[RMDB]
RNA sequence: GGGAACGACUCGAGUAGAGUCGAAAAAUCGGCCCGUUCGCGGGCCGAUACAGGCGGAGGCUCGCACCUUGCGACCGGCGCAAGGACGCACGGUACUGCGAAUUGACUGUGGAUUCGUCCACAGUAACACGUGAGAUGCAUUCGUGCAUCUCACGUGAAAAGAAACAACAACAACAAC
Reactivity to DMS in 0.01 (KOAc 150mM, MgCl2 10mM, bicine 150mM(pH8.5), 24C), signal-to-noise 1, nucleotides 027 to 126: a020u020c010g040g000c000c000c000g000u000u010c150g030c000g030g000g020c000c000g010a000u000a030c110a090g020g010c000g000g020a110g000g010c050u000c060g030c050a120c030c020u010u000g000c030g040a110c160c120g030g010c080g020c040a100a040g020g010a190c090g030c020a030c110g020g000u000a050c090u010g010c060g000a090a090u010u000g010a040c010u000g020u000g000g020a030u000u000c240g010u010c000c000a000c000a000g000u000a030a060
Reactivity to 2A3 in 0.01 (KOAc 150mM, MgCl2 10mM, bicine 150mM(pH8.5), 24C), signal-to-noise 1, nucleotides 027 to 126: a000u000c000g040g000c040c010c000g030u000u030c210g010c000g070g010g000c030c000g010a000u000a000c010a010g140g000c010g060g120a060g030g000c030u050c060g040c030a040c040c000u020u030g030c000g040a110c030c080g090g050c030g000c050a050a080g000g050a140c040g030c010a110c030g000g060u170a130c050u040g050c020g060a050a140u130u240g050a000c000u000g000u020g000g000a010u070u020c190g000u000c010c010a000c000a000g000u000a000a060